[RMDB]
RNA sequence: GGGAACGACUCGAGUAGAGUCGAAAAACGUCCGCGCUACGGCGCGGCCGAGUCCGUUCAUCUCUUCGGAGACGCAUGAUAACCUAGCAUGGAACGGGGCUAGGACGUGGCGUUACGACGCCACGAAAAGAGCAGCUGCACUUCGGUGCAGCUGCAACUGACAAAUAUUCUUCGGAAUAUUUGUCAGAAAAGAAACAACAACAACAAC
Reactivity to 2A3 in 0.01 (KOAc 150mM, MgCl2 10mM, bicine 150mM(pH8.5), 24C), signal-to-noise 1, nucleotides 027 to 156: a000c000g020u000c000c020g040c010g000c000u080a090c270g090g020c010g030c020g050g000c010c000g000a020g050u020c020c000g010u010u010c010a060u020c000u010c000u020u160c260g080g000a010g020a050c030g050c130a150u240g100a190u150a130a050c010c000u020a020g020c010a040u050g070g000a000a000c000g000g020g000g000c010u010a010g000g000a000c000g000u010g000g000c000g000u010u100a100c290g030a000c000g030c000c000a000c000g010a000a000a010a000g050a010g000c000a000g000c020u000g000c000a020c000u060u100c250g100g000u000g010c030a000g000c010u000g010c000a000a000
Reactivity to DMS in 0.01 (KOAc 150mM, MgCl2 10mM, bicine 150mM(pH8.5), 24C), signal-to-noise 1, nucleotides 027 to 156: a050c070g020u020c000c010g030c060g100c000u010a040c250g060g000c030g050c000g000g020c020c000g110a140g000u000c020c000g010u000u020c020a180u000c000u030c010u020u000c210g030g000a020g000a050c100g000c130a070u000g000a170u000a030a120c000c000u000a030g020c040a070u010g000g000a020a100c010g020g000g000g030c000u020a050g000g020a300c010g000u000g000g080c000g000u000u020a230c190g040a190c030g020c000c000a000c010g000a020a060a050a070g010a250g020c000a020g000c050u000g040c000a000c000u000u000c300g000g000u000g050c000a020g000c000u000g000c000a000a010
This 207-nucleotide RNA was probed chemically with 2A3 and DMS. For 2A3 the reverse transcriptase was SuperScript II with manganese. Conditions: 150 mM KOAc, 10 mM MgCl2 and 150 mM bicine (pH 8.5), 24 C. For DMS the reverse transcriptase was MarathonRT. The data come from the RNA Mapping Database (RMDB), library M2RFPK. For 2A3, 852 sequencing reads were counted.